The record gives the reactivity of an RNA of 207 nucleotides to 2A3. Conditions: 150 mM KOAc, 10 mM MgCl2 and 150 mM bicine (pH 8.5), 24 C. The data come from the RNA Mapping Database (RMDB), library ARCHII.
RNA sequence: GGGAACGACUCGAGUAGAGUCGAAAACUUCGUCAUCAACACACACAGUUUAUAAUAACUGGCAAAUCAAACAAUAAUUUCGCAGUAGCUGCCUAAUCGCACUCUGCAUCGCCUAACAGCAUUUCCUAUGUGCUGUUAACGCGAUUCAACCUUAAUAGCGAACCAACACGUUCGCGUGUUGGUUCGCAAAAGAAACAACAACAACAAC
Reactivity to 2A3 in 0.01 (KOAc 150mM, MgCl2 10mM, bicine 150mM(pH8.5), 24C), signal-to-noise 1, nucleotides 027 to 156: c060u150u100c010g160u060c070a170u030c090a250a080c030a030c050a040c000a000c020a070g030u030u050u050a300u050a240a050u140a060a000c000u000g040g020c020a000a090a220u120c020a020a110a100c030a000a070u260a090a000u020u160u300c070g000c000a000g020u280a000g000c100u000g000c010c030u170a180a010u110c020g000c000a000c000u000c020u000g000c000a000u000c000g000c000c000u000a000a000c000a000g030c000a000u030u100u030c000c050u160a020u120g000u000g000c000u010g000u000u000a010a010c000g000c060g090a000u080u070c020a060a080c010c010u100u100a110a090u050a120